[RMDB]
RNA sequence: GGGAACGACUCGAGUAGAGUCGAAAAGAUAUGGACGGUUGUAGGUAGCUUACUGGUCGGAAACGACCAGAAAGCUAUAAUCUACACCCGUCCUAAGUCAAAACACCCAGUGUUCGCACUGGGUGAAGAGGACAAUAAACUUCGGUUUAUUGUCCUCAAAAGAAACAACAACAACAAC
Reactivity to DMS in 0.01 (KOAc 150mM, MgCl2 10mM, bicine 150mM(pH8.5), 24C), signal-to-noise 3, nucleotides 027 to 126: g010a060u000a300u010g000g000a000c010g000g020u000u000g010u000a010g000g020u020a020g000c000u000u000a160c000u000g020g000u010c010g010g000a100a100a190c000g010a000c000c010a020g000a030a040a020g000c000u000a040u000a240a080u010c000u000a020c000a030c050c010c000g030u000c010c000u000a000a070g010u010c030a090a140a140a240c010a000c010c000c000a000g050u000g010u000u010c290g030c010a030c000u000g000g000g040u000g000a020a070
Reactivity to 2A3 in 0.01 (KOAc 150mM, MgCl2 10mM, bicine 150mM(pH8.5), 24C), signal-to-noise 2, nucleotides 027 to 126: g010a020u050a020u100g010g000a010c000g010g010u000u020g020u000a010g030g050u080a040g000c010u010u040a070c010u010g020g000u000c010g020g000a050a070a050c000g000a010c020c000a000g000a000a000a010g000c000u000a010u020a020a020u000c000u000a000c000a010c000c000c000g000u000c000c000u000a010a000g010u010c010a050a010a100a120c010a010c030c000c000a010g020u020g040u050u120c300g070c140a000c000u010g010g050g000u000g010a000a010
Structure probing data (DMS and 2A3) for a 177-nucleotide construct. For DMS, 3,464 sequencing reads were counted. Reactivities are given for positions 27 through 126. DMS adducts were read by reverse transcription with MarathonRT.